The data come from the RNA Mapping Database (RMDB), library M2RFPK. An RNA of 207 nucleotides, treated with 2A3 and DMS and read out base by base. The reactions ran in a buffer of 150 mM KOAc, 10 mM MgCl2 and 150 mM bicine (pH 8.5), at 24 C. For DMS, 2,046 sequencing reads were counted.
RNA sequence: GGGAACGACUCGAGUAGAGUCGAAAACAGAUAAGAACAGACCGAGAGGUUCAAGCUUAUAGGGCAGAAAGCGGGGGACAGCAGUACUAAACAUUCCCUGUGGCUGAGACGAAGGUAGUACUCCAACAAAACGAGUACUAGUUCGCUAGUACUCGAAGGGUCUAUUAUUGUUCGCAAUAAUAGACCCAAAAGAAACAACAACAACAAC
Reactivity to 2A3 in 0.01 (KOAc 150mM, MgCl2 10mM, bicine 150mM(pH8.5), 24C), signal-to-noise 2, nucleotides 027 to 156: c000a010g070a100u110a130a030g030a070a030c030a020g030a000c000c030g030a000g000a020g100g000u070u050c050a020a000g000c020u020u070a030u060a100g000g030g000c020a010g050a090a130a000g060c060g000g010g010g000g000a000c020a020g000c010a000g030u030a020c020u080a020a100a000c030a060u040u040c000c000c000u050g010u030g040g010c020u040g020a000g000a080c060g000a070a000g030g000u050a000g020u020a040c030u020c060c020a040a080c010a060a180a040a010c020g000a000g000u000a000c000u000a000g020u030u040c040g020c100u000a000g000u000a000c000u000c000g010a000a030
Reactivity to DMS in 0.01 (KOAc 150mM, MgCl2 10mM, bicine 150mM(pH8.5), 24C), signal-to-noise 1, nucleotides 027 to 156: c020a220g040a060u000a040a110g010a060a100c000a130g040a050c000c030g010a170g000a140g010g000u000u010c040a140a110g010c030u010u000a070u000a070g000g010g000c010a080g040a040a040a090g070c110g020g000g030g020g010a110c020a030g020c010a080g010u000a080c040u000a040a060a110c040a200u000u000c000c020c010u010g000u010g020g060c050u000g010a130g000a070c000g000a130a010g020g000u000a020g060u000a010c020u010c010c030a000a110c140a020a080a040a150c040g000a020g010u000a000c010u000a010g010u000u000c300g040c010u010a010g000u000a010c000u000c000g020a040a080